RNA sequence: GGGAACGACUCGAGUAGAGUCGAAAAUUCGAUCCGGACCGGCUCAUCUCGGCAAGGGGCGGCAGUCCUCAGUACUCUUACUCUUUCCUAUAAAGAGGAGACUGCUGGACUCGCCGCCCGAGCCCGAAACGCGGAAUGUUCGCAUUCCGCAAAAGAAACAACAACAACAAC
Reactivity to 2A3 in 0.01 (KOAc 150mM, MgCl2 10mM, bicine 150mM(pH8.5), 24C), signal-to-noise 6, nucleotides 027 to 129: u080u040c020g000a030u030c030c050g010g030a030c000c000g030g000c010u010c040a080u020c030u020c030g030g000c050a090a080g000g020g000g000c000g000g010c020a000g010u020c000c000u010c010a020g010u130a300c000u000c010u070u100a170c010u000c000u040u080u030c060c060u160a220u220a290a020a000g000a000g000g040a000g010a000c000u000g040c040u000g000g000a000c010u010c050g000c000c000g000c000c010c010g000a000g010c000c000c000g040a080a040a020c090
Reactivity to DMS in 0.01 (KOAc 150mM, MgCl2 10mM, bicine 150mM(pH8.5), 24C), signal-to-noise 5, nucleotides 027 to 129: u040u000c060g020a110u060c100c050g040g040a060c050c010g000g070c000u010c020a120u000c070u000c060g010g020c070a140a100g050g040g010g040c010g050g000c000a000g000u020c000c000u020c020a030g010u000a170c040u000c010u070u040a300c020u040c010u050u020u030c200c260u080a120u080a050a030a000g010a020g000g060a030g010a060c020u040g030c160u010g050g000a030c000u010c050g030c000c000g030c010c010c030g030a030g000c010c010c050g000a030a040a050c060